[RMDB]
RNA sequence: GGGAACGACUCGAGUAGAGUCGAAAAGAUAUGGAAUAACUACCCACCGUAUUAAGUCUAAGACAGUCAUUCUAACUCGGAAACGAGUUAGAAUGAUCGAGACUUGAUACGAGGUUAUUCCUAAGUCGAUAGGUUUACUGUUCGCAGUAAACCUAUCAAAAGAAACAACAACAACAAC
Reactivity to DMS in 0.01 (KOAc 150mM, MgCl2 10mM, bicine 150mM(pH8.5), 24C), signal-to-noise 4, nucleotides 027 to 126: g010a120u010a110u020g000g020a010a020u020a010a020c020u000a180c040c010c020a300c130c000g000u000a010u000u000a000a010g010u000c000u000a230a160g060a250c300a120g010u000c000a000u000u000c010u010a010a020c000u000c000g000g000a120a080a190c010g010a020g020u000u010a000g000a030a000u010g000a000u000c030g000a040g010a010c000u000u000g010a010u000a010c000g010a030g020g000u000u000a000u000u010c000c000u000a070a060g000u010c200
Reactivity to 2A3 in 0.01 (KOAc 150mM, MgCl2 10mM, bicine 150mM(pH8.5), 24C), signal-to-noise 3, nucleotides 027 to 126: g100a090u300a250u300g000g010a010a020u020a000a010c010u300a300c020c030c010a010c040c010g000u000a000u000u010a000a000g010u000c030u060a190a080g140a220c090a020g090u000c000a000u000u000c000u000a010a000c010u010c000g040g000a070a090a080c000g000a000g000u000u010a000g010a000a000u000g000a000u010c010g010a000g000a010c000u010u020g010a000u000a020c000g000a010g000g000u000u000a010u010u010c010c000u030a080a040g300u300c190